The record gives the reactivity of an RNA of 177 nucleotides to 2A3 and DMS. Source: RMDB library M2PK90, as collected in RNAgym. For 2A3, 1,258 sequencing reads were counted. DMS adducts were read by reverse transcription with MarathonRT.
[RMDB]
RNA sequence: GGGAACGACUCGAGUAGAGUCGAAAAGAUUAGGCAGAUAACAACUAUUACGCGUCUUGCCACUGUAUUGUAAAGUAAACAACAAGAUAUAAGUUUAAUACACCUACGGGACAAGAUGAAUCAGCAAGACUUAACGCUAUUUCGAUAGCGUUAAGUCAAAAGAAACAACAACAACAAC
Reactivity to 2A3 in 0.01 (KOAc 150mM, MgCl2 10mM, bicine 150mM(pH8.5), 24C), signal-to-noise 2, nucleotides 027 to 126: g060a040u090u150a080g000g060c080a000g030a050u070a070a060c080a080a010c050u070a110u170u130a040c120g000c020g010u000c000u030u000g000c000c010a240c070u030g000u000a010u070u030g040u050a010a020a140g050u020a000a020a040c000a010a040c040a050a070g070a110u070a020u020a300a020g010u050u000u000a050a020u060a040c030a000c000c000u010a000c010g010g000g000a010c020a020a010g000a020u030g020a050a110u080c010a020g030c040a120a050
Reactivity to DMS in 0.01 (KOAc 150mM, MgCl2 10mM, bicine 150mM(pH8.5), 24C), signal-to-noise 2, nucleotides 027 to 126: g000a110u010u000a010g000g010c020a040g000a140u000a030a020c110a060a050c100u000a070u010u010a080c170g010c040g010u000c000u000u000g020c000c000a070c010u000g000u010a010u000u000g000u010a050a120a150g020u000a010a020a010c070a120a120c200a130a100g020a180u020a100u010a060a170g000u000u000u000a040a030u010a020c040a000c220c140u000a030c040g020g000g000a010c000a010a010g000a000u000g000a000a010u000c090a040g020c170a030a130